Notes: Source: RMDB library 15KREP, as collected in RNAgym. Chemical mapping of a 177-nucleotide RNA with DMS and 2A3.
RNA sequence: GGGAACGACUCGAGUAGAGUCGAAAAGCCGGAGAUCCUUCUCGAGAAUUCGCCUUUUCUUCCUUUCUUCCACCCACUGCUCGAGGAUCUCCUCCCUCCCCUUCGAGGAUUCCCCUGCGACGGGUAGCGAUCCAUAAGAGUUCGCUCUUAUGGAUCGAAAAGAAACAACAACAACAAC
Reactivity to DMS in 0.01 (KOAc 150mM, MgCl2 10mM, bicine 150mM(pH8.5), 24C), signal-to-noise 2, nucleotides 027 to 126: g010c180c160g030g010a030g010a040u000c000c070u000u000c090u000c030g020a070g020a170a130u000u010c050g000c040c040u000u000u000u000c050u010u000c040c020u010u010u000c030u010u000c050c040a110c030c000c020a100c140u000g010c030u000c020g020a040g010g000a020u000c020u000c000c020u000c020c000c010u000c020c000c000c030u010u000c020g000a050g000g000a300u000u000c050c050c000c060u000g000c000g010a050c110g000g020g010u000a060g010
Reactivity to 2A3 in 0.01 (KOAc 150mM, MgCl2 10mM, bicine 150mM(pH8.5), 24C), signal-to-noise 1, nucleotides 027 to 126: g090c030c020g020g010a020g000a020u010c020c000u090u060c090u040c050g020a010g040a060a130u110u080c080g050c010c030u040u150u060u040c020u050u090c020c050u020u070u060c020u060u030c020c010a040c080c020c000a030c050u080g020c000u030c020g020a020g000g050a040u000c020u000c000c000u050c010c010c010u000c000c020c000c000u020u010c010g010a010g070g000a090u060u080c080c000c000c000u070g040c000g040a040c020g000g030g000u000a030g130
For DMS the reverse transcriptase was MarathonRT.